An RNA of 177 nucleotides, treated with 2A3 and DMS and read out base by base.
[RMDB]
RNA sequence: GGGAACGACUCGAGUAGAGUCGAAAAAAACAAAGUGGGGCCAUUGUUCAUUUUAUUGCUUUGGGAAGAGCUGCUGAUGAAGCAGUAAUAGAGAUGAGCAAGAUAACAGGAGGAAGUCAUUUUUAUGAACGUAUAAGCAAUUCGUUGCUUAUACGUUAAAAGAAACAACAACAACAAC
Reactivity to 2A3 in 0.01 (KOAc 150mM, MgCl2 10mM, bicine 150mM(pH8.5), 24C), signal-to-noise 4, nucleotides 027 to 126: a020a010a010c050a000a040a000g050u040g010g000g030g000c030c010a030u030u060g020u040u050c020a040u020u070u040u200a120u100u110g030c040u070u060u080g070g020g040a100a030g010a040g050c030u030g000c010u010g030a100u140g020a030a000g000c000a000g000u010a020a020u080a020g070a010g010a030u050g010a020g010c010a010a020g010a060u090a060a010c020a020g020g020a010g040g020a070a000g040u040c040a070u050u030u050u090u100a150u220g070
Reactivity to DMS in 0.01 (KOAc 150mM, MgCl2 10mM, bicine 150mM(pH8.5), 24C), signal-to-noise 7, nucleotides 027 to 126: a060a050a060c060a040a050a060g030u000g010g010g010g020c080c040a040u000u000g010u000u010c040a050u000u010u010u010a060u020u000g020c030u000u000u000g000g010g010a130a060g000a210g010c020u000g010c000u000g000a130u010g000a150a010g010c000a010g010u000a040a070u010a080g000a090g000a070u000g000a050g010c010a020a030g000a080u010a050a050c070a050g000g010a100g010g000a080a060g010u030c060a080u000u000u010u010u010a080u030g010
For 2A3, 4,424 sequencing reads were counted.